[RMDB]
RNA sequence: GGGAACGACUCGAGUAGAGUCGAAAAGUCGACGUGAACGGCCACGGGUCCGUCGAACGCUGCGAUGCGUCGUCGCCCGUCGGGAUCCGCUUGACGAGCGUCCAACUGCGCAGAUCGAUGACGCCGAUGCUAAUGGGAGUUUCGACUCCCAUUAGCAAAAAGAAACAACAACAACAAC
Reactivity to DMS in 0.01 (KOAc 150mM, MgCl2 10mM, bicine 150mM(pH8.5), 24C), signal-to-noise 3, nucleotides 027 to 126: g000u000c030g030a040c030g010u000g030a070a090c060g030g010c020c040a090c060g000g010g010u000c080c040g000u010c010g020a060a060c090g010c000u000g010c180g000a110u000g010c030g010u010c060g020u000c020g020c010c020c020g020u000c060g020g000g010a110u020c110c090g020c050u000u010g020a040c050g010a270g020c030g010u010c070c050a120a130c090u020g010c040g000c040a070g000a100u000c030g020a090u010g050a050c070g020c000c000g010a130
Reactivity to 2A3 in 0.01 (KOAc 150mM, MgCl2 10mM, bicine 150mM(pH8.5), 24C), signal-to-noise 2, nucleotides 027 to 126: g080u010c000g000a050c020g060u090g000a110a020c000g010g040c020c010a020c030g050g000g030u120c120c070g040u020c030g010a080a020c040g000c040u050g030c040g080a090u100g010c010g010u040c010g010u000c020g000c000c020c000g020u020c060g000g000g000a090u090c030c050g120c170u050u140g060a020c010g020a040g020c020g020u020c040c020a060a060c030u120g010c010g000c030a000g000a100u070c030g020a050u040g030a020c020g050c070c000g030a060
Annotation
This 177-nucleotide RNA was probed chemically with DMS and 2A3. Reactivities are given for positions 27 through 126. For 2A3 the reverse transcriptase was SuperScript II with manganese. The 2A3 profile rests on 2,664 reads. The data come from the RNA Mapping Database (RMDB), library OK2TST. Reactivities are rounded to 0.1 and cut off at 0 and 3.